[RMDB]
RNA sequence: GGGAACGACUCGAGUAGAGUCGAAAAGAGUAUGAAGGCGCUGGGCUUCGUACUACAUUUGACCUCAAUGACAUUGAUAACACCUACAUACUUGAGGGUGAUGUAGAAAUCCUAAUGUCUCCGACAAUGCUAGACGGGGUUACGGAUAUGCCGCAGCCGUUAAGCUUCAGUUCGCUGAAGCUUAACGAAAAGAAACAACAACAACAAC
Reactivity to 2A3 in 0.01 (KOAc 150mM, MgCl2 10mM, bicine 150mM(pH8.5), 24C), signal-to-noise 7, nucleotides 027 to 156: g030a000g030u080a040u110g070a070a010g080g010c040g000c030u020g010g030g010c000u010u010c030g010u030a050c000u010a010c010a030u040u060u120g240a170c010c010u020c030a040a050u150g060a070c060a090u080u120g060a070u160a230a060c050a060c070c020u070a040c030a040u060a060c020u030u010g010a030g010g000g010u050g020a010u000g000u000a010g010a040a090a000u050c000c010u070a110a040u100g030u030c000u000c040c000g060a050c090a140a110u170g070c050u130a040g010a090c020g010g010g000g000u030u020a030c030g010g010a020u040a060u210g010c010c010g090c060a000g010c000
Reactivity to DMS in 0.01 (KOAc 150mM, MgCl2 10mM, bicine 150mM(pH8.5), 24C), signal-to-noise 2, nucleotides 027 to 156: g000a110g030u000a050u000g000a050a050g000g020c050g000c060u000g020g020g030c040u000u000c060g030u000a120c050u010a030c030a070u000u010u000g010a090c040c000u010c050a090a070u010g010a140c060a090u000u000g000a090u010a140a100c080a180c140c000u000a080c040a070u000a060c060u000u030g010a100g030g010g010u000g000a030u000g010u000a040g000a110a080a100u000c030c130u000a040a040u000g010u000c010u000c020c020g030a160c100a090a100u000g000c040u000a070g010a130c000g000g000g040g000u000u010a030c040g020g010a220u000a060u000g000c000c010g000c000a060g020c040